An RNA of 177 nucleotides, treated with DMS and 2A3 and read out base by base. The reactions ran in a buffer of 150 mM KOAc, 10 mM MgCl2 and 150 mM bicine (pH 8.5), at 24 C. Reactivities are given for positions 27 through 126. 2A3 adducts were read by reverse transcription with SuperScript II with manganese. The 2A3 profile rests on 3,293 reads.
RNA sequence: GGGAACGACUCGAGUAGAGUCGAAAAUUUGGAACUAAAGCAGGGCAAGGCAGGGGAAGUGAUAGUGACCGGCUUGCGUACUGAACAACUCUCGCUUAGCGAUGCUAAAUUAUUGCUAGAAGCCGCCGUAAUCGCUAUUUUUCGAAAUAGCGAUUACAAAAGAAACAACAACAACAAC
Reactivity to DMS in 0.01 (KOAc 150mM, MgCl2 10mM, bicine 150mM(pH8.5), 24C), signal-to-noise 4, nucleotides 027 to 126: u000u000u010g010g010a080a110c070u000a060a090a090g000c040a060g000g010g020c050a060a110g000g010c030a100g000g000g000g000a070a180g000u000g000a170u010a070g010u000g010a110c070c040g020g020c130u010u000g020c130g020u010a040c040u000g000a110a050c110a050a200c090u000c030u000c070g000c040u000u000a130g000c010g000a070u010g020c080u010a050a070a110u010u010a060u000u000g000c000u000a050g010a070a100g010c020c050g020c120c130
Reactivity to 2A3 in 0.01 (KOAc 150mM, MgCl2 10mM, bicine 150mM(pH8.5), 24C), signal-to-noise 2, nucleotides 027 to 126: u090u040u120g030g030a050a030c030u070a120a100a030g030c020a000g060g030g000c020a060a040g050g000c010a000g030g020g020g010a100a050g050u020g050a050u100a100g080u070g100a070c030c000g060g010c080u080u110g040c060g000u030a020c020u020g010a060a010c010a020a030c010u020c000u000c020g000c010u050u030a010g010c020g040a020u050g000c020u050a010a060a040u180u130a070u050u060g030c010u010a020g010a120a030g040c000c030g030c040c060